Annotation:
Structure probing data (DMS and 2A3) for a 177-nucleotide construct. The RNA was probed in 150 mM KOAc, 10 mM MgCl2 and 150 mM bicine (pH 8.5) at 24 C.
RNA sequence: GGGAACGACUCGAGUAGAGUCGAAAAGCCUACCUUACUCGAAAUACCCGUCGAUGAAGACUACUAAAUGACGAAUCCUAAUAAACCAAUGGUUUUCAUUGCGGAUAUGAGGCAUUUGUCUGAGCGGCUAUCAACUCCAGUUCGCUGGAGUUGAUAGAAAAGAAACAACAACAACAAC
Reactivity to DMS in 0.01 (KOAc 150mM, MgCl2 10mM, bicine 150mM(pH8.5), 24C), signal-to-noise 1, nucleotides 027 to 126: g030c000c020u010a080c060c050u000u000a070c090u000c010g000a090a120a070u000a120c010c020c030g020u000c020g020a070u000g010a050a040g000a070c020u020a050c130u000a050a050a090u000g020a040c060g010a050a100u000c050c040u000a050a100u000a040a060a160c090c060a050a090u010g010g010u000u020u000u000c000a000u000u000g020c120g020g000a120u000a030u000g010a060g020g010c120a070u000u000u000g010u000c050u010g000a100g000c190g000g000
Reactivity to 2A3 in 0.01 (KOAc 150mM, MgCl2 10mM, bicine 150mM(pH8.5), 24C), signal-to-noise 2, nucleotides 027 to 126: g020c000c000u030a030c010c020u080u140a080c020u040c040g020a100a090a020u060a050c030c000c000g050u080c080g100a030u070g030a020a000g020a010c000u030a040c000u100a200a160a110u130g020a000c030g020a020a040u060c000c040u130a120a090u120a130a150a060c020c030a050a080u060g030g040u050u030u080u190c010a000u010u020g000c050g050g010a010u020a000u040g030a000g000g000c030a050u010u060u050g060u020c030u020g030a030g040c030g040g000
Overview
Reactivities are given for positions 27 through 126. Source: RMDB library RFMREP, as collected in RNAgym.